[RMDB]
RNA sequence: GGGAACGACUCGAGUAGAGUCGAAAAGAGCGUCGAGAGACGAAGAGAAGUGCAUGGAUCCACAACGGAGAACGUAAUAAUGCACACCUGUGGAUUAGUGUCCGGAACAACGGGCACAAGAGGCAGACAUGGCCAUGAGUUUCGACUCAUGGCCAUGAAAAGAAACAACAACAACAAC
Reactivity to 2A3 in 0.01 (KOAc 150mM, MgCl2 10mM, bicine 150mM(pH8.5), 24C), signal-to-noise 2, nucleotides 027 to 126: g100a020g000c010g000u010c010g020a020g000a020g000a030c020g070a030a050g100a000g050a130a000g020u010g040c000a000u090g050g030a030u040c030c030a040c040a100a110c100g000g050a030g020a150a010c090g020u090a010a060u180a090a100u300g040c020a030c000a050c030c020u000g000u030g000g020a020u000u030a100g000u010g010u000c000c010g000g050a040a020c080a020a030c040g000g020g000c010a000c000a000a020g050a020g050g000c010a000g000a020
Reactivity to DMS in 0.01 (KOAc 150mM, MgCl2 10mM, bicine 150mM(pH8.5), 24C), signal-to-noise 3, nucleotides 027 to 126: g050a140g000c040g000u000c000g000a200g010a240g010a070c020g010a120a080g000a060g000a120a090g020u000g000c000a020u000g000g030a050u010c020c010a010c090a070a140c120g000g020a090g010a100a110c060g020u030a090a100u000a200a010u000g000c020a030c020a110c100c010u010g000u010g000g000a170u000u000a140g010u000g020u000c000c000g000g010a140a120c280a120a140c060g030g000g000c020a010c020a010a040g010a290g000g000c000a030g020a250